[RMDB]
RNA sequence: GGGAACGACUCGAGUAGAGUCGAAAAGAAAGUAGCGACUUACUAACCGGUAAGGCAUACCGCGAAAGUAUGACGGGAAAAGAACCGUAAAAGGCUAAGAUAGGCCGAACUAUCAAGCUACGAAAAAGGGUUAACUUGACUUCGGUCAAGUUAACCCAAAAGAAACAACAACAACAAC
Reactivity to DMS in 0.01 (KOAc 150mM, MgCl2 10mM, bicine 150mM(pH8.5), 24C), signal-to-noise 1, nucleotides 027 to 126: g000a150a050a110g000u000a000g000c000g000a160c000u000u110a000c000u000a060a300c300c000g040g000u000a110a030g040g060c250a160u000a000c020c000g000c090g000a190a070a100g000u000a060u000g000a040c000g000g000g000a140a100a300a090g000a020a110c000c000g040u000a050a070a070a070g000g000c110u000a110a000g000a040u000a090g000g020c000c060g010a210a080c040u000a220u000c090a050a030g050c000u000a050c000g020a130a000a010a010a110
Background
Conditions: 150 mM KOAc, 10 mM MgCl2 and 150 mM bicine (pH 8.5), 24 C. This 177-nucleotide RNA was probed chemically with DMS. The data come from the RNA Mapping Database (RMDB), library OK1LIB.